[RMDB]
RNA sequence: GGGAACGACUCGAGUAGAGUCGAAAAACAACCUAAAUGACAACAACACAUUCCUCCUGUUACUUUUGAGCAUCACGUCCUACCAAAAAGAGGGAGAACAACUUUUCAAUGAGGCAGGACUCCUAUCAUUAUGACACUAGAGUGUAGGGGAAAGUUAAUGGCAGAAACGUUUCGACGUUUCUGCCAUAAAAGAAACAACAACAACAAC
Reactivity to 2A3 in 0.01 (KOAc 150mM, MgCl2 10mM, bicine 150mM(pH8.5), 24C), signal-to-noise 1, nucleotides 027 to 156: a000c070a040a110c020c030u170a160a180a170u200g060a000c060a050a000c000a070a050c020a130c000a160u010u050c010c050u080c040c000u020g020u090u140a080c070u300u110u010u120g110a120g010c000a110u160c010a000c050g020u020c000c000u030a080c000c020a150a050a000a000a000g020a010g000g000g020a050g060a040a040c040a000a040c070u080u020u150u120c020a010a020u080g000a070g100g000c040a010g010g000a020c060u040c000c070u120a120u130c020a060u110u190a110u100g020a020c020a060c070u040a100g010a030g140u020g000u060a020g020g000g000g030a010a010a010g000u020u100a070

Conditions: 150 mM KOAc, 10 mM MgCl2 and 150 mM bicine (pH 8.5), 24 C. This 207-nucleotide RNA was probed chemically with 2A3. For 2A3 the reverse transcriptase was SuperScript II with manganese.